[RMDB]
RNA sequence: GGGAACGACUCGAGUAGAGUCGAAAAUAUGUACGGCUUCUACACUGUCGCUGGCAAUCCAGGUUGGCAAUGUCCUGAGGCCAUACGCUUCAAGAAUGGGUUGCACUUCAUGGGUAUCAAGCUGGGAAUUAGUGAUAAUGUUCGCAUUAUCACUAAUAAAAGAAACAACAACAACAAC
Reactivity to DMS in 0.01 (KOAc 150mM, MgCl2 10mM, bicine 150mM(pH8.5), 24C), signal-to-noise 9, nucleotides 027 to 126: u010a080u010g020u010a080c040g010g010c010u000u000c040u000a030c020a060c030u000g010u000c020g010c120u000g010g010c180a080a070u000c010c010a030g000g010u010u000g020g010c050a080a070u000g010u000c100c070u000g000a030g010g010c010c110a060u010a050c140g010c070u000u000c060a070a090g010a090a100u000g010g010g010u000u000g000c030a080c040u000u000c030a050u000g000g000g010u000a040u000c090a030a050g010c020u000g010g010g010a110
Reactivity to 2A3 in 0.01 (KOAc 150mM, MgCl2 10mM, bicine 150mM(pH8.5), 24C), signal-to-noise 6, nucleotides 027 to 126: u280a100u150g100u100a020c020g000g010c010u070u020c010u050a010c040a020c030u030g010u050c020g020c120u020g090g020c040a030a040u050c010c010a030g060g050u150u100g080g000c060a140a200u130g050u090c020c030u050g000a030g030g000c010c010a020u070a040c030g010c010u040u040c040a070a070g070a120a060u060g010g010g040u020u030g020c030a040c050u020u020c030a100u110g060g000g000u040a040u150c030a040a000g040c020u020g010g010g040a060